The record gives the reactivity of an RNA of 177 nucleotides to 2A3.
Conditions: 150 mM KOAc, 10 mM MgCl2 and 150 mM bicine (pH 8.5), 24 C.
For 2A3 the reverse transcriptase was SuperScript II with manganese.
As a SHAPE reagent, 2A3 marks flexible, mostly unpaired nucleotides at the ribose 2'-OH.
Reactivities are given for positions 27 through 126.
Source: RMDB library OK1LIB, as collected in RNAgym.

[RMDB]
RNA sequence: GGGAACGACUCGAGUAGAGUCGAAAAUGCAGUCAACAGCGCACCUACUGCAACAUGCGCUGCUUGAGUGGCGGAUUGUUCGGCAGAAUUCUCUGACAUCGCACGGAGUGCACGAAAGGUACGCGCAGAUGCUCCGGGUGUUCGCACCCGGAGCAUCAAAAGAAACAACAACAACAAC
Reactivity to 2A3 in 0.01 (KOAc 150mM, MgCl2 10mM, bicine 150mM(pH8.5), 24C), signal-to-noise 1, nucleotides 027 to 126: u090g010c010a020g120u000c010a000a000c000a100g000c000g000c040a040c090c010u210a180c030u020g000c040a050a030c020a010u010g000c000g000c030u010g090c010u150u140g000a070g040u100g000g180c050g000g060a030u050u180g000u140u030c040g030g220c180a040g070a150a190u180u000c000u000c000u070g000a050c020a070u130c020g030c090a000c140g100g040a060g000u090g050c000a000c220g070a030a000a010g000g000u010a000c030g000c000g040c000a000